[RMDB]
RNA sequence: GGGAACGACUCGAGUAGAGUCGAAAACAUGAAGGUCUCUAAAGCAAGGCCCUCCUCAGCUUACUCCCUGCCAGCCGAGGGCCUCAGUCUCAUUGUUAACUCAGUGAGAGGGCGGUGGAGCCCCUCGGAUUCGAGGGUCUUUCGAGACCCUCGAAUCAAAAGAAACAACAACAACAAC
Reactivity to DMS in 0.01 (KOAc 150mM, MgCl2 10mM, bicine 150mM(pH8.5), 24C), signal-to-noise 1, nucleotides 027 to 126: c100a020u020g000a070a100g040g010u010c020u020c010u020a070a200a100g020c090a210a020g020g010c020c010c020u010c010c140u010c170a110g000c040u010u000a230c070u000c020c040c010u000g000c110c170a040g030c050c180g010a010g000g010g030c080c070u000c050a110g020u000c010u000c000a020u000u010g010u020u000a110a090c140u010c000a020g040u000g000a020g000a030g030g000g020c020g020g030u040g000g030a030g000c050c000c010c010u000c020g010